An RNA of 177 nucleotides, treated with DMS and 2A3 and read out base by base.
[RMDB]
RNA sequence: GGGAACGACUCGAGUAGAGUCGAAAAGACGGAAAAGAUCGAACCUAAGAAGAUCAGGAAAUGUGAGCCGAAUCCUAGGGCUCCUAGGCACGCAUCGUCCGAUGCGAAAUAAACACUAACGUCGAAAAGCAUAUGGGCAUUUCGAUGCCCAUAUGCUAAAAGAAACAACAACAACAAC
Reactivity to DMS in 0.01 (KOAc 150mM, MgCl2 10mM, bicine 150mM(pH8.5), 24C), signal-to-noise 2, nucleotides 027 to 126: g000a070c000g000g040a080a090a110a010g010a010u000c010g010a290a170c050c100u020a080a160g000a060a010g000a020u000c040a120g000g030a010a010a260u000g010u070g000a000g000c020c000g100a050a110u000c050c030u000a070g000g000g000c010u000c000c040u000a090g000g030c190a250c000g100c040a000u000c000g010u170c290c300g000a000u000g040c000g000a020a140a240u000a140a090a100c060a120c220u050a000a150c000g000u000c000g030a030a130a070
Reactivity to 2A3 in 0.01 (KOAc 150mM, MgCl2 10mM, bicine 150mM(pH8.5), 24C), signal-to-noise 1, nucleotides 027 to 126: g000a000c000g200g010a000a000a000a150g050a010u070c000g040a070a160c000c020u090a090a070g040a080a000g070a030u090c040a040g010g160a000a050a300u200g050u160g020a000g010c010c010g020a030a000u050c030c000u040a060g020g000g020c030u040c000c000u160a070g010g000c050a000c180g000c000a030u000c000g300u090c110c180g020a000u040g030c000g070a000a050a110u140a000a100a050c040a000c030u050a060a000c000g000u000c000g000a030a030a030
The RNA was probed in 150 mM KOAc, 10 mM MgCl2 and 150 mM bicine (pH 8.5) at 24 C. The DMS profile rests on 1,029 reads. 2A3 adducts were read by reverse transcription with SuperScript II with manganese.